[RMDB]
RNA sequence: GGGAACGACUCGAGUAGAGUCGAAAAGUUGGUACCUGAAAGCUCUUUUCAAGGAGAAGAAGGGCCAAUAAACGGCGGGGGUAACUAUGACCCUCUCAAGGUAGCGUAAUACCUAGCCGCUUAAUUGCCGUAUAUAAGAGUUCGCUCUUAUAUACGGAAAAGAAACAACAACAACAAC
Reactivity to DMS in 0.01 (KOAc 150mM, MgCl2 10mM, bicine 150mM(pH8.5), 24C), signal-to-noise 5, nucleotides 027 to 126: g010u000u010g000g020u000a080c000c010u000g000a160a220a080g010c000u000c000u000u000u010u010c300a160a120g000g000a020g010a010a020g010a300a030g000g000g000c000c010a010a010u000a040a090a070c040g010g020c020g000g000g010g000g010u000a050a090c150u000a070u010g000a050c040c000c000u000c090u010c260a090a050g010g010u000a050g010c190g020u000a050a120u000a010c020c000u000a180g010c000c000g000c050u000u010a040a130u010u010g010
Reactivity to 2A3 in 0.01 (KOAc 150mM, MgCl2 10mM, bicine 150mM(pH8.5), 24C), signal-to-noise 6, nucleotides 027 to 126: g020u020u010g090g020u250a300c000c000u010g020a080a040a000g020c000u010c010u080u140u180u160c150a150a090g010g000a010g000a010a000g020a000a010g000g000g000c000c000a010a000u050a040a070a000c020g000g000c010g010g160g000g010g000u020a070a020c020u020a070u170g060a060c000c010c010u000c040u020c050a070a060g000g000u030a020g060c050g090u070a120a020u010a050c010c010u000a050g060c000c000g020c030u070u070a080a050u220u160g050
Source: RMDB library RFMREP, as collected in RNAgym. This 177-nucleotide RNA was probed chemically with DMS and 2A3. For DMS the reverse transcriptase was MarathonRT. The DMS profile rests on 4,659 reads.